[RMDB]
RNA sequence: GGGAACGACUCGAGUAGAGUCGAAAACCACCGAAGUUCGCUUCGGUGGAAAAGAUACCGGUCUCGGUAUCAAAGUGAGACCCACAGACCACUGGAAACUGAAAACCGAUCCGUUCGCGGAUCGGAAGAUUAAGCUUGACUUCGGUCAAGCUUAAUCAAAAGAAACAACAACAACAAC
Reactivity to 2A3 in 0.01 (KOAc 150mM, MgCl2 10mM, bicine 150mM(pH8.5), 24C), signal-to-noise 2, nucleotides 027 to 126: c000c000a000c000c000g000a040a000g000u050u080c100g140c180u000u010c000g010g010u010g000g000a000a010a000a030g000a000u020a000c060c020g030g160u260c300u150c240g000g010u010a010u010c020a000a050a000g010u010g020a090g050a090c010c060c000a020c000a010g150a060c060c030a100c130u130g040g110a100a100a080c050u090g060a070a090a030a110c000c000g000a000u000c020c000g020u060u010c260g000c000g060g000a020u000c000g010g010a000a000
Reactivity to DMS in 0.01 (KOAc 150mM, MgCl2 10mM, bicine 150mM(pH8.5), 24C), signal-to-noise 1, nucleotides 027 to 126: c000c000a010c000c010g020a000a020g020u000u000c230g020c000u000u000c000g030g000u010g010g000a020a020a060a110g000a040u000a020c000c010g020g010u010c260u020c020g010g000u000a000u000c000a080a120a070g000u000g010a110g010a250c040c010c030a090c050a110g000a150c080c030a080c050u000g020g000a040a080a050c130u000g000a080a080a060a180c020c000g000a010u000c000c000g020u010u000c250g010c000g000g000a000u000c000g000g010a010a050